[RMDB]
The record gives the reactivity of an RNA of 177 nucleotides to DMS and 2A3. The reactions ran in a buffer of 150 mM KOAc, 10 mM MgCl2 and 150 mM bicine (pH 8.5), at 24 C. It was measured as part of the RMDB library OK2TST. For DMS, 10,343 sequencing reads were counted. The 2A3 profile rests on 10,803 reads.
RNA sequence: GGGAACGACUCGAGUAGAGUCGAAAACUCUCGCCAGCCGAUGAGCUGUCGCACCACCCCUUCGGCCGAAUUGAGGGGGAUCUCGUCGCGUUCGUGGUAGGCCUGCUCGAUCGCGGUAACGGCCUCCCCUAAAUUAAUCCUUCGGGAUUAAUUUAGGAAAAGAAACAACAACAACAAC
Reactivity to DMS in 0.01 (KOAc 150mM, MgCl2 10mM, bicine 150mM(pH8.5), 24C), signal-to-noise 6, nucleotides 027 to 126: c100u000c040u000c050g010c070c030a060g010c040c010g010a100u010g020a110g020c030u000g000u000c060g010c160a100c110c090a200c010c010c000c020u000u010c060g000g010c080c070g000a110a140u010u000g000a050g010g000g010g010g010a040u010c050u000c070g010u000c040g010c050g010u000u000c030g020u010g010g010u000a070g010g010c040c030u000g000c030u000c030g000a060u000c050g020c030g000g000u010a050a090c080g010g000c000c010u000c040c040
Reactivity to 2A3 in 0.01 (KOAc 150mM, MgCl2 10mM, bicine 150mM(pH8.5), 24C), signal-to-noise 6, nucleotides 027 to 126: c010u000c010u020c030g030c030c020a020g010c010c030g260a280u140g030a050g010c030u020g040u090c020g020c040a060c010c040a070c010c000c000c010u010u030c030g080g000c050c050g130a160a140u140u120g000a060g000g000g010g020g000a010u040c060u030c060g040u020c020g010c010g060u050u030c030g010u070g020g040u050a040g010g080c010c030u030g020c010u010c020g070a140u060c040g000c070g030g040u030a080a030c040g010g000c000c000u010c010c010